[RMDB]
Annotation: Structure probing data (2A3) for a 207-nucleotide construct. The reactions ran in a buffer of 150 mM KOAc, 10 mM MgCl2 and 150 mM bicine (pH 8.5), at 24 C. 2A3 adducts were read by reverse transcription with SuperScript II with manganese.

RNA sequence: GGGAACGACUCGAGUAGAGUCGAAAAUUCUCUUCCCCCGCGAUCCUUCUUCGACUCGUGCCGGCUCAUCUCGGCAAGAGGGGGCGGACCUCAGUGCUCUUACUCUUUUCUGUAAAGAGGAGACUGCUGGUCCCGCCCCCCAAGCCCGAGCAUGAGCGAAGCAAUAACUCUUCGGAGUUAUUGCUUCAAAAGAAACAACAACAACAAC
Reactivity to 2A3 in 0.01 (KOAc 150mM, MgCl2 10mM, bicine 150mM(pH8.5), 24C), signal-to-noise 2, nucleotides 027 to 156: u050u000c000u000c020u070u020c000c000c000c000c000g020c010g060a020u040c020c040u100u130c040u080u140c070g070a040c040u000c030g030u040g140c040c040g040g020c010u010c010a020u010c000u000c000g000g030c040a030a060g060a190g040g000g010g000g000c000g000g000a000c000c000u020c000a060g030u150g210c030u020c060u110u270a300c010u090c000u080u140u260u100c120u300g240u300a040a060a010g000a010g010g000a010g020a000c020u000g110c040u020g000g010u020c000c070c000g000c000c000c000c000c000c000a010a000g020c010c000c000g010a010g010c030a000u000g010a010g030c010